[RMDB]
RNA sequence: GGGAACGACUCGAGUAGAGUCGAAAAUAACACUGGCGGCUGCGUAUCACUCUAGGGUACGUGAUAGUGCGAUAUAAGAAGCACUGGUACAUGCCGGCAGGGUCAGUUAAGAGAUGGCCGCAGUCUCAAAAGGGGUCAUUCUUCGGAAUGACCCCAAACGUAUCAGACUGUUCGCAGUCUGAUACGUAAAAGAAACAACAACAACAAC
Reactivity to DMS in 0.01 (KOAc 150mM, MgCl2 10mM, bicine 150mM(pH8.5), 24C), signal-to-noise 1, nucleotides 027 to 156: u010a080a080c020a030c020u010g000g080c030g030g020c040u010g040c050g020u000a000u000c000a110c140u000c150u020a250g010g020g010u000a000c020g000u030g010a120u010a020g020u020g000c010g050a120u000a190u000a150a100g010a180a300g040c010a000c000u020g010g000u000a050c090a050u000g020c000c000g040g000c000a020g000g000g000u000c010a170g010u000u010a070a140g040a060g070a060u000g000g020c000c090g000c010a220g000u000c000u000c010a090a050a170a160g000g020g080g010u000c010a050u000u000c010u000u000c290g040g000a050a060u010g000a010c020c000c010c000a000a000
An RNA of 207 nucleotides, treated with DMS and read out base by base. Source: RMDB library M2RFPK, as collected in RNAgym. Conditions: 150 mM KOAc, 10 mM MgCl2 and 150 mM bicine (pH 8.5), 24 C.